[RMDB]
Notes
Source: RMDB library OK2TST, as collected in RNAgym. An RNA of 177 nucleotides, treated with 2A3 and DMS and read out base by base. For DMS the reverse transcriptase was MarathonRT.
RNA sequence: GGGAACGACUCGAGUAGAGUCGAAAAGAUGGUUUGGAGUUGGGUGUUCUUUACCCCAACAAUGGCUCUCAAUUGGAGAUACACCUGGUGAACGUGAACAUGGUGGUGCCCGCACUGCGGAGUGUUCCAUAUGUGCCUUCUUCGGAAGGCACAUAUGAAAAGAAACAACAACAACAAC
Reactivity to 2A3 in 0.01 (KOAc 150mM, MgCl2 10mM, bicine 150mM(pH8.5), 24C), signal-to-noise 2, nucleotides 027 to 126: g030a050u090g020g060u070u120u130g040g030a130g010u010u010g020g020g020u100g030u120u030c080u080u090u140a070c030c010c000c010a010a000c000a000a010u060g030g000c010u000c000u000c030a080a300u160u100g100g010a080g010a040u080a070c020a000c020c000u020g000g060u080g070a100a020c050g060u050g070a030a000c030a080u100g050g000u030g010g010u030g040c000c030c000g090c010a110c070u110g020c050g030g100a090g020u030g020u010u030c010
Reactivity to DMS in 0.01 (KOAc 150mM, MgCl2 10mM, bicine 150mM(pH8.5), 24C), signal-to-noise 6, nucleotides 027 to 126: g010a100u000g000g000u000u000u000g020g010a300g000u000u000g010g000g020u000g020u010u010c150u010u000u010a140c050c010c000c010a030a050c030a050a110u010g020g010c050u000c040u000c050a110a120u010u010g010g000a050g010a090u000a080c090a060c040c030u000g010g020u000g010a070a070c130g010u000g010a050a060c090a040u000g010g030u000g000g010u000g010c050c030c060g010c070a050c060u000g010c070g010g020a120g020u000g000u000u000c020